This 207-nucleotide RNA was probed chemically with DMS and 2A3.
RNA sequence: GGGAACGACUCGAGUAGAGUCGAAAAAAGUCCAUAUGCCCACCUUCGCUGUAUCGGGUGGAUGCUUAUACAUGCUAUGGAUGCCUACAUUUGAAAUAAUGUAGAUGCCUAAUACUCUCUCUCAGGGAGAGAGUUUAGAUGCCUCCAAAGGUGAUGCAUAUAUAAUUACUUUCGAGUAAUUAUAUAUAAAAGAAACAACAACAACAAC
Reactivity to DMS in 0.01 (KOAc 150mM, MgCl2 10mM, bicine 150mM(pH8.5), 24C), signal-to-noise 2, nucleotides 027 to 156: a070a100g000u000c020c020a060u000a060u000g000c070c020c000a080c020c000u000u000c110g010c070u020g000u010a100u010c060g050g050g010u020g010g000a070u000g000c030u000u000a140u000a090c120a070u000g010c070u000a200u000g000g010a030u000g010c050c010u000a020c000a010u000u000u000g010a150a090a100u000a030a000u000g000u000a010g000a090u010g020c040c010u000a000a070u000a040c000u010c000u000c000u000c010u010c090a300g050g050g010a020g010a000g000a000g020u000u000u000a040g030a100u000g010c030c000u010c030c100a090a110a100g010g030u000g000a070u000g020c090
Reactivity to 2A3 in 0.01 (KOAc 150mM, MgCl2 10mM, bicine 150mM(pH8.5), 24C), signal-to-noise 1, nucleotides 027 to 156: a020a000g000u000c000c000a000u010a030u160g010c020c010c010a010c010c000u100u100c120g070c150u300g010u280a160u160c020g020g050g000u020g060g010a030u090g000c010u070u160a060u030a220c040a070u070g030c010u030a050u060g000g000a000u030g000c000c000u000a000c010a040u000u020u190g130a120a130a030u090a020a010u100g000u000a000g020a080u080g040c000c000u030a150a030u170a110c000u010c000u020c000u000c010u040c110a100g100g260g000a000g000a000g000a000g000u000u000u000a000g000a000u040g020c000c000u070c040c010a160a070a000g030g000u060g010a030u060g000c010
The DMS profile rests on 3,083 reads.
Reactivities are given for positions 27 through 156.
Source: RMDB library OK3TST, as collected in RNAgym.